[RMDB]
RNA sequence: GGGAACGACUCGAGUAGAGUCGAAAAGAACCCUGCCUCACAUGAAGCUGCCCUUACCGUCUUAAGUUGCAUUCACAGCAAGGAUGAUUAUUGGUGGGUUCGUAGCACAUACAACAAGGCAUUGUAGGUACGCUUUAGUGUUCGCACUAAAGCGUACAAAAGAAACAACAACAACAAC
Reactivity to 2A3 in 0.01 (KOAc 150mM, MgCl2 10mM, bicine 150mM(pH8.5), 24C), signal-to-noise 3, nucleotides 027 to 126: g040a090a080c000c000c010u000g020c010c000u060c020a090c000a120u080g050a070a040g020c010u030g000c000c000c000u030u070a040c010c000g040u010c040u060u080a170a090g030u030u010g050c030a060u120u200c100a070c030a110g040c000a000a010g050g020a040u080g020a050u070u130a040u120u140g020g000u010g010g050g000u030u060c060g000u010a020g000c030a040c000a080u150a050c030a120a000c020a060a030g030g030c030a030u020u170g110u160a060g020
Reactivity to DMS in 0.01 (KOAc 150mM, MgCl2 10mM, bicine 150mM(pH8.5), 24C), signal-to-noise 3, nucleotides 027 to 126: g000a100a150c030c010c000u000g010c020c020u000c130a100c160a100u020g010a060a070g020c020u000g000c020c030c030u010u000a030c070c020g030u000c020u000u000a080a100g030u000u010g000c050a130u010u000c210a130c130a070g000c060a100a100g010g010a030u010g000a060u000u010a060u000u000g000g040u000g000g010g000u000u010c100g010u000a020g050c090a100c100a040u010a090c090a040a060c130a060a030g020g010c030a070u000u000g000u010a080g000